Source: RMDB library OK1LIB, as collected in RNAgym. The record gives the reactivity of an RNA of 177 nucleotides to DMS and 2A3. For 2A3 the reverse transcriptase was SuperScript II with manganese. The 2A3 profile rests on 1,747 reads. Conditions: 150 mM KOAc, 10 mM MgCl2 and 150 mM bicine (pH 8.5), 24 C.

RNA sequence: GGGAACGACUCGAGUAGAGUCGAAAAGAAAAGAGCGUAAUCGCGUCUUGACGUGAGUGAGCCUAGACUGUAGACUAUCCCAAGUGGGAUAGGAUACCUCACAAUACGCUGAUCUACAGUCAAAAGAGGACUAUCCCGAUUUCGAUCGGGAUAGUCCAAAAGAAACAACAACAACAAC
Reactivity to DMS in 0.01 (KOAc 150mM, MgCl2 10mM, bicine 150mM(pH8.5), 24C), signal-to-noise 1, nucleotides 027 to 126: g000a090a030a090a130g000a000g060c000g000u000a000a300u030c010g000c050g000u000c100u070u020g040a000c040g050u000g000a010g000u000g000a000g070c180c260u040a020g000a040c010u030g050u050a000g030a030c020u000a000u030c000c000c030a300a120g010u090g000g000g000a000u020a000g060g000a050u000a000c120c010u000c020a000c060a080a200u000a000c040g000c000u000g000a040u000c000u000a000c000a000g000u000c000a100a070a040a140g000a170
Reactivity to 2A3 in 0.01 (KOAc 150mM, MgCl2 10mM, bicine 150mM(pH8.5), 24C), signal-to-noise 3, nucleotides 027 to 126: g180a000a050a000a010g060a010g000c000g000u010a020a000u050c030g010c010g030u000c120u090u240g140a010c000g030u010g000a060g020u000g000a000g000c070c020u050a050g000a000c000u020g000u010a010g020a030c000u000a000u040c000c000c030a120a240g280u300g030g010g000a000u010a000g050g000a020u050a030c000c000u030c000a020c020a030a000u020a000c000g000c000u000g000a040u000c000u000a000c000a000g000u010c020a000a000a000a060g110a040